RNA sequence: GGGAACGACUCGAGUAGAGUCGAAAAGCUGAGGCAUGAGAAUCACGUCACCCCAGGAGGCAGAGGCUGCCGUGAGCUGAGAUCGCGCCACUGUGCUCUAUCCUGGGCGACAGAGCAAGACUCUGUCGUUGACAGGUUGCUUCGGCAACCUGUCAACAAAAGAAACAACAACAACAAC
Reactivity to 2A3 in 0.01 (KOAc 150mM, MgCl2 10mM, bicine 150mM(pH8.5), 24C), signal-to-noise 2, nucleotides 027 to 126: g000c040u050g070a030g030g030c010a080u060g040a040g050a120a050u100c030a040c110g050u020c070a090c030c020c020c000a020g040g010a020g020g040c050a000g040a010g160g000c100u080g060c080c000g020u030g010a040g020c060u060g060a010g030a210u130c050g010c000g020c090c000a060c010u060g020u030g090c000u010c010u020a040u000c010c010u020g000g020g000c010g000a000c010a010g010a000g020c080a210a080g020a160c010u000c000u020g000u000c040
Reactivity to DMS in 0.01 (KOAc 150mM, MgCl2 10mM, bicine 150mM(pH8.5), 24C), signal-to-noise 2, nucleotides 027 to 126: g050c020u000g020a050g020g000c020a090u030g000a120g000a120a070u040c060a040c080g000u000c040a160c160c060c010c020a060g000g030a070g010g030c050a000g000a040g010g020c070u000g040c130c060g030u010g000a040g010c060u000g010a170g030a070u000c040g020c020g040c110c040a110c020u000g010u000g030c030u010c080u010a070u000c010c010u010g000g010g020c080g010a010c010a000g000a010g020c050a100a060g000a300c000u000c020u000g010u000c020